[RMDB]
RNA sequence: GGGAACGACUCGAGUAGAGUCGAAAAGAUAUGGAAGGUAUAAGACAGUCUGGUAUCGGAAACGAUACCAAGGACAAUGACGUACUUCCUAAGUCAAAACGAUCACGUUGUUCGCAACGUGAUCGAACGUAAAGGCAAUGUUCGCAUUGCCUUUACGAAAAGAAACAACAACAACAAC
Reactivity to DMS in 0.01 (KOAc 150mM, MgCl2 10mM, bicine 150mM(pH8.5), 24C), signal-to-noise 5, nucleotides 027 to 126: g010a020u000a150u010g000g000a010a010g010g010u010a030u000a120a120g020a130c140a070g000u000c010u000g000g010u000a000u000c000g010g000a060a050a060c000g010a010u000a000c000c000a020a030g020g000a020c030a140a110u010g000a160c180g000u000a050c010u000u010c000c000u010a030a110g000u000c020a080a050a090a180c030g000a000u000c000a010c000g020u000u000g000u000u010c200g000c010a010a000c010g000u000g000a000u000c000g000a010a030
Reactivity to 2A3 in 0.01 (KOAc 150mM, MgCl2 10mM, bicine 150mM(pH8.5), 24C), signal-to-noise 4, nucleotides 027 to 126: g010a010u010a000u080g010g050a030a030g300g050u130a070u020a140a120g130a130c050a030g020u000c010u040g020g000u010a010u010c000g020g000a040a010a000c010g010a000u000a010c010c010a010a010g070g000a000c030a040a300u130g010a000c040g010u040a030c000u010u000c010c020u010a050a010g000u010c030a000a010a080a140c030g000a010u020c000a000c020g000u000u020g030u100u080c280g020c170a010a000c010g000u000g000a000u000c010g000a000a000
An RNA of 177 nucleotides, treated with DMS and 2A3 and read out base by base. The DMS profile rests on 6,952 reads. The reactions ran in a buffer of 150 mM KOAc, 10 mM MgCl2 and 150 mM bicine (pH 8.5), at 24 C.